[RMDB]
RNA sequence: GGGAACGACUCGAGUAGAGUCGAAAAGAUAUGGAUGGAGAGCGAUAAGAAUGAUCAGGUCGGAAACGACCUGCGUAUUCUUUUGACGCUUUAAGUCCUAAGUCAAAUCUCUACUUCGGUAGAGAAAGGAAUUUAUCAUGUUCGCAUGAUAAAUUCCAAAAGAAACAACAACAACAAC
Reactivity to DMS in 0.01 (KOAc 150mM, MgCl2 10mM, bicine 150mM(pH8.5), 24C), signal-to-noise 2, nucleotides 027 to 126: g000a060u010a300u000g020g000a030u000g000g000a110g010a000g040c010g000a120u000a010a030g010a030a040u000g010a050u000c010a000g020g010u000c000g000g000a130a100a240c010g000a000c000c010u000g020c140g010u000a000u000u000c000u000u000u000u000g000a230c060g000c010u000u000u000a280a170g000u000c010c000u000a050a130g000u010c020a090a120a150u000c000u000c000u000a000c010u000u030c150g020g000u010a000g000a010g000a010a050a080
Reactivity to 2A3 in 0.01 (KOAc 150mM, MgCl2 10mM, bicine 150mM(pH8.5), 24C), signal-to-noise 2, nucleotides 027 to 126: g020a020u070a040u100g010g000a000u030g000g060a030g000a000g070c030g010a020u020a090a020g000a010a010u030g010a050u130c010a010g000g000u020c000g010g000a070a080a100c000g000a000c000c010u000g000c010g000u030a010u010u000c000u060u090u060u110g200a080c020g000c000u040u010u010a030a000g010u000c000c000u000a120a000g050u000c020a160a080a170u000c000u000c000u000a010c020u040u070c280g110g000u020a000g010a020g050a090a010a000